[RMDB]
RNA sequence: GGGAACGACUCGAGUAGAGUCGAAAAGUAGUACAAACGCUAAAUUUAUAUAAACAAACACAAAUUAAUCUCAUGGAUUCAUACGUUCAAAUACCUGAUGGUAAUGUAAUCAAAAAGAUUCAGUAUGCACAGAUACCUUAUUCGUAAGGUAUCUGUGAAAAGAAACAACAACAACAAC
Reactivity to DMS in 0.01 (KOAc 150mM, MgCl2 10mM, bicine 150mM(pH8.5), 24C), signal-to-noise 2, nucleotides 027 to 126: g010u000a080g040u000a120c080a080a150a070c110g020c070u000a050a040a110u010u010u000a070u000a070u010a090a050a110c050a070a090a090c050a040c030a050a070a200u000u000a050a120u000c010u000c080a180u010g000g000a030u000u000c020a020u000a010c080g010u000u000c040a040a050a100u010a040c040c020u010g010a070u020g010g020u000a040a020u010g010u010a040a020u010c040a060a090a090a070a110g020a060u000u000c100a040g000u000a030u000g020
Reactivity to 2A3 in 0.01 (KOAc 150mM, MgCl2 10mM, bicine 150mM(pH8.5), 24C), signal-to-noise 3, nucleotides 027 to 126: g000u050a010g020u040a080c070a080a170a000c060g000c030u060a110a120a270u150u200u030a200u050a030u120a110a140a030c040a040a110a010c040a030c010a040a150a110u150u050a080a070u050c030u010c050a060u100g010g000a010u020u000c020a010u010a030c010g010u030u060c030a080a100a060u040a080c020c020u150g140a100u140g140g000u010a040a040u070g050u110a040a000u050c040a010a140a180a070a000g030a010u050u010c000a020g010u000a030u090g020
Structure probing data (DMS and 2A3) for a 177-nucleotide construct.
For DMS the reverse transcriptase was MarathonRT.
High DMS reactivity at an A or C suggests that its Watson-Crick edge is free.
The RNA was probed in 150 mM KOAc, 10 mM MgCl2 and 150 mM bicine (pH 8.5) at 24 C.